An RNA of 207 nucleotides, treated with 2A3 and read out base by base.
[RMDB]
RNA sequence: GGGAACGACUCGAGUAGAGUCGAAAACGCUGGGGUGGAGUAGGGAGCUGGACCUGAAGCGCGCACGGGUCACAGCGAGGAUCUACUCGUAACAUCCCUGUGCUGAAGCGCGCACGGCAACCGAAAGGUGCGAUGCCAUUCUGUUCGCAGAAUGGAAAGAUAUCUCUAGCUUCGGCUAGAGAUAUCUAAAAGAAACAACAACAACAAC
Reactivity to 2A3 in 0.01 (KOAc 150mM, MgCl2 10mM, bicine 150mM(pH8.5), 24C), signal-to-noise 1, nucleotides 027 to 156: c050g030c020u090g000g000g000g000u010g000g000a000g000u000a010g010g020g000a000g000c000u000g010g000a000c000c000u020g050a220a080g010c030g000c020g010c050a020c030g000g000g000u010c170a250c000a300g000c000g020a250g000g010a000u000c000u010a000c000u050c000g010u030a070a020c000a090u060c000c010c010u040g030u040g000c060u130g030a130a050g000c000g030c000g010c000a010c030g100g010c050a100a080c010c010g090a120a020a030g050g000u000g020c050g040a050u240g060c000c000a000u000u000c010u010g070u040u060c260g040c070a000g010a000a000u020g010g010a050a030
The RNA was probed in 150 mM KOAc, 10 mM MgCl2 and 150 mM bicine (pH 8.5) at 24 C. The data come from the RNA Mapping Database (RMDB), library RNAMAK.